[RMDB]
RNA sequence: GGGAACGACUCGAGUAGAGUCGAAAAUGGUUGUCAAAGAAGUCGGGAAUGCCUCAGGCUGGCAACAGAGCAGGGAAAACGACUCGCACUUAAUAGUGAAAGGAUAGCAAGCCUUUAUAGCGUCGAAGGUUAUCGCUUGGCUCCUAACUGGUAUUCGCAAUCAAUGGAUGUUCGCAUCCAUUGAUUGAAAAGAAACAACAACAACAAC
Reactivity to 2A3 in 0.01 (KOAc 150mM, MgCl2 10mM, bicine 150mM(pH8.5), 24C), signal-to-noise 4, nucleotides 027 to 156: u130g040g000u030u020g030u040c040a040a040a090g100a070a000g050u060c050g000g000g050a140a130u130g090c000c000u050c030a030g060g000c010u010g010g010c020a050a030c040a030g000a010g000c040a000g000g040g000a010a070a020a050c020g040a030c010u000c030g030c010a040c010u160u290a120a050u100a240g030u020g050a100a040a020g020g010a040u060a040g030c020a070a040g010c000c010u060u100u060a140u060a060g040c050g020u030c040g070a050a010g050g010u070u080a080u090c040g000c040u040u040g050g010c010u030c010c000u050a100a080c040u050g030g030u080a090u070u040c020g000
Reactivity to DMS in 0.01 (KOAc 150mM, MgCl2 10mM, bicine 150mM(pH8.5), 24C), signal-to-noise 2, nucleotides 027 to 156: u000g020g020u000u000g020u000c030a090a110a120g030a040a080g040u010c040g040g000g020a120a040u000g040c040c040u000c050a130g020g020c040u000g030g020c040a070a110c070a130g000a110g030c060a140g030g020g010a040a070a090a130c040g000a050c010u000c030g020c040a040c050u000u000a090a150u000a100g020u000g010a050a070a080g020g020a090u020a090g010c030a080a060g010c010c030u010u000u000a090u010a110g010c100g000u000c150g020a060a040g010g010u000u000a080u000c050g020c020u000u000g000g010c030u010c010c000u000a040a050c040u000g020g010u010a110u000u000c020g000
Notes: This 207-nucleotide RNA was probed chemically with 2A3 and DMS. 2A3 is a SHAPE reagent: it acylates the 2'-hydroxyl of flexible nucleotides of all four kinds. Conditions: 150 mM KOAc, 10 mM MgCl2 and 150 mM bicine (pH 8.5), 24 C. Reactivities are rounded to 0.1 and cut off at 0 and 3. For DMS the reverse transcriptase was MarathonRT.